[RMDB]
RNA sequence: GGGAACGACUCGAGUAGAGUCGAAAAAUUUUGUCUCAAAACUUAUGGUUUAGAUCGUUACCUUUUUGGAAAAGCAUGACUACCAGUUUCAUGAUGUCUCAAGAUGUUUUAAACUUUUCUUCGUACAUGCGGAAGCCUAUUAGGGAUUAUUUAGAGAGAUAAUGACGUAGUUCGCUACGUCAUUAUCAAAAGAAACAACAACAACAAC
Reactivity to DMS in 0.01 (KOAc 150mM, MgCl2 10mM, bicine 150mM(pH8.5), 24C), signal-to-noise 2, nucleotides 027 to 156: a120u000u000u000u010g020u000c010u000c010a080a060a090a130c050u010u000a030u000g020g010u000u010u000a050g000a100u000c100g010u000u010a080c010c010u000u000u000u000u000g040g000a050a050a120a100g010c010a040u000g010a120c050u030a050c030c070a130g000u000u000u000c100a060u020g020a040u000g010u020c020u000c110a090a120g020a030u010g000u000u000u010u000a040a060a060c010u000u010u000u000c060u000u010c060g000u010a060c080a070u000g050c010g000g020a150a140g020c010c040u020a060u000u000a030g010g020g010a130u000u000a050u010u000u010a080g010a120g010a230
Reactivity to 2A3 in 0.01 (KOAc 150mM, MgCl2 10mM, bicine 150mM(pH8.5), 24C), signal-to-noise 1, nucleotides 027 to 156: a000u190u230u110u120g080u000c020u020c000a080a150a080a100c090u200u150a130u300g010g050u080u080u170a030g040a070u090c040g030u090u120a260c000c000u090u010u030u030u050g070g010a080a030a040a020g020c020a000u000g000a040c020u020a040c040c050a020g010u050u010u080c060a020u060g050a020u040g020u000c020u030c100a090a100g000a070u030g040u010u010u030u090a050a050a010c000u140u060u090u060c030u080u050c030g030u070a120c000a030u050g000c020g010g040a030a040g010c000c000u020a040u020u040a030g050g010g030a010u010u050a070u050u220u140a090g030a020g010a000